[RMDB]
RNA sequence: GGGAACGACUCGAGUAGAGUCGAAAAGUAUUCAUUCUCCUUUCUCGAUAGAGAUUGGAGUCAUACAACCCCAGAAACCAUUCCUUAUACCAUGAGUAUUGCUGAAUUCAGUUUAGCGUGCAUGCUCUUAAUGGGUGCACCUUCGGGUGCACCCAAACAAGGUAUUCUACUUCGGUAGAAUACCUUGAAAAGAAACAACAACAACAAC
Reactivity to 2A3 in 0.01 (KOAc 150mM, MgCl2 10mM, bicine 150mM(pH8.5), 24C), signal-to-noise 3, nucleotides 027 to 156: g030u000a030u060u220c090a080u110u020c020u000c000c030u010u010u000c020u010c020g170a290u180a300g000a000g010a010u000u010g000g040a010g000u000c000a010u010a040c010a000a080c010c000c000c000a030g120a090a080a020c060c030a100u180u270c000c020u170u150a080u100a230c030c030a110u100g010a010g010u010a030u090u160g000c000u000g040a110a080u120u250c030a130g100u080u080u120a030g020c040g000u030g050c030a010u030g020c000u040c000u100u130a190a110u080g010g000g010u000g000c010a010c000c040u050u090c290g070g010g000u000g050c000a000c020c000c000a000a010a000
Reactivity to DMS in 0.01 (KOAc 150mM, MgCl2 10mM, bicine 150mM(pH8.5), 24C), signal-to-noise 1, nucleotides 027 to 156: g020u010a030u000u020c040a290u000u000c000u010c000c010u020u000u010c010u010c000g030a300u010a160g010a010g010a030u000u020g010g000a040g000u010c300a070u000a070c000a120a230c040c010c010c050a180g000a130a050a050c040c010a160u000u000c020c080u000u010a080u010a080c080c070a110u010g000a210g000u000a020u000u000g020c000u030g000a040a080u000u010c130a120g000u000u010u000a020g010c070g000u000g050c030a070u000g010c020u000c030u000u010a140a150u010g020g020g020u000g040c000a000c010c000u020u010c290g050g010g050u000g030c000a030c000c000c000a010a000a060
Structure probing data (2A3 and DMS) for a 207-nucleotide construct. For 2A3, 1,031 sequencing reads were counted. For 2A3 the reverse transcriptase was SuperScript II with manganese. For DMS, 2,039 sequencing reads were counted. Conditions: 150 mM KOAc, 10 mM MgCl2 and 150 mM bicine (pH 8.5), 24 C.